[RMDB]
RNA sequence: GGGAACGACUCGAGUAGAGUCGAAAAGCCGUGCUCGAGAGGGAGCAGAAAAUGCAGAGCUAUCCCGUCGUUUCGCUUAACAAAUGCGAAACGACAAAUUGCGUUACAUACGCAAUCCUCUAAUGAACCUCUAACCACUGUUCGCAGUGGUUAGAGGAAAAGAAACAACAACAACAAC
Reactivity to DMS in 0.01 (KOAc 150mM, MgCl2 10mM, bicine 150mM(pH8.5), 24C), signal-to-noise 1, nucleotides 027 to 126: g020c020c110g000u000g000c000u000c010g000a020g010a060g040g000g000a030g000c020a090g050a090a060a150a010u000g010c100a060g000a090g010c020u010a120u000c000c000c020g020u000c010g000u000u000u010c000g010c020u000u000a050a180c300a000a090a110u000g000c010g000a050a000a020c000g000a000c010a000a000a010u010u000g020c020g020u000u000a020c280a060u000a050c020g020c000a040a010u000c070c000u000c050u000a150a110u000g020a050a150
Reactivity to 2A3 in 0.01 (KOAc 150mM, MgCl2 10mM, bicine 150mM(pH8.5), 24C), signal-to-noise 2, nucleotides 027 to 126: g000c030c010g070u030g010c010u010c020g100a070g000a010g070g030g000a000g000c040a000g070a010a170a040a020u250g000c070a020g050a060g090c000u030a040u040c020c020c020g000u000c000g000u000u000u000c010g010c020u160u140a190a060c040a020a180a040u070g000c010g010a000a000a000c000g010a000c010a010a150a000u010u000g000c000g010u010u100a220c080a080u190a030c100g000c000a000a010u040c010c000u040c020u050a080a100u190g060a030a050
This 177-nucleotide RNA was probed chemically with DMS and 2A3.
It was measured as part of the RMDB library M2PK90.
High DMS reactivity at an A or C suggests that its Watson-Crick edge is free.
The RNA was probed in 150 mM KOAc, 10 mM MgCl2 and 150 mM bicine (pH 8.5) at 24 C.
Reactivities are given for positions 27 through 126.
For 2A3, 1,899 sequencing reads were counted.